[RMDB]
Chemical mapping of a 177-nucleotide RNA with DMS and 2A3. Values cover nucleotides 27 to 126. The RNA was probed in 150 mM KOAc, 10 mM MgCl2 and 150 mM bicine (pH 8.5) at 24 C. It was measured as part of the RMDB libraries RFM100 and RFMREP. For DMS the reverse transcriptase was MarathonRT.
RNA sequence: GGGAACGACUCGAGUAGAGUCGAAAACACUGAGAAAGUAGCAAUUUACUAUGCGAAGCUAGUAAAUUAGCGGAUUUCGAGGUGGAGUCAGAUUACGGGAAUGCGGAGCAUGGAGUAAUCUGAUUAAUCGUGACUGUUUAUUCGUAAACAGUCACGAAAAAGAAACAACAACAACAAC
Reactivity to DMS in 0.01 (KOAc 150mM, MgCl2 10mM, bicine 150mM(pH8.5), 24C), signal-to-noise 5, nucleotides 027 to 126: c010a010c010u010g000a300g000a000a000a020g000u030a300g000c000a020a000u000u000u000a000c000u000a020u020g030c040g010a150a130g020c050u000a000g000u000a000a000a010u000u010a120g000c010g000g030a300u000u000u000c000g000a300g000g010u000g000g000a080g000u000c000a000g000a020u000u000a010c000g040g010g050a120a010u010g010c000g020g030a150g030c000a000u000g010g010a280g000u000a000a000u000c000u000g000a020u010u010a090a070
Reactivity to 2A3 in 0.01 (KOAc 150mM, MgCl2 10mM, bicine 150mM(pH8.5), 24C), signal-to-noise 6, nucleotides 027 to 126: c010a000c000u020g000a010g010a060a000a010g030u090a020g000c000a000a000u020u010u000a000c000u020a030u290g030c100g070a140a040g040c010u000a000g010u010a000a000a010u000u040a040g010c020g220g240a050u000u000u000c000g010a010g000g000u000g010g010a010g010u000c010a000g000a010u010u010a000c000g030g030g260a190a030u030g030c060g190g100a120g050c030a020u020g010g030a070g020u000a000a000u000c000u000g000a000u000u070a030a080